[RMDB]
RNA sequence: GGGAACGACUCGAGUAGAGUCGAAAAGCAUAACUGUUCGCAGUUAUGCAAAACACGAAGCUGGAAACAGACGCUGUGAAACAAACAAAAGCGAAAACAAAAAAAGCCAACAGUUCGCUGUUGGCAAGAAUCAGAUAGACUUCGGUCUAUCUGAUUCAAAAGAAACAACAACAACAAC
Reactivity to DMS in 0.01 (KOAc 150mM, MgCl2 10mM, bicine 150mM(pH8.5), 24C), signal-to-noise 2, nucleotides 027 to 126: g000c000a000u000a000a000c000u000g020u000u000c050g030c010a080g020u000u000a010u010g050c010a000a020a080a050c050a030c030g000a140a120g010c000u010g020g000a110a080a140c030a050g000a080c040g010c190u030g010u010g010a070a090a110c170a110a100a100c170a030a050a060a060g000c020g000a030a030a090a050c110a030a010a040a080a070a070a120g000c010c020a010a000c000a000g000u000u010c260g020c020u000g000u000u000g000g010c000a020a010
Reactivity to 2A3 in 0.01 (KOAc 150mM, MgCl2 10mM, bicine 150mM(pH8.5), 24C), signal-to-noise 2, nucleotides 027 to 126: g000c000a000u000a010a000c000u020g060u120u070c100g000c050a000g010u000u010a000u000g000c000a000a050a040a010c030a010c010g070a080a040g030c010u040g020g040a110a070a030c020a000g120a110c040g030c100u060g000u010g070a080a030a020c030a030a170a000c030a030a140a040a020g020c030g040a030a030a020a030c120a040a160a020a030a040a000a010g000c010c000a000a010c000a020g040u070u070c180g000c100u030g000u000u000g000g050c020a000a010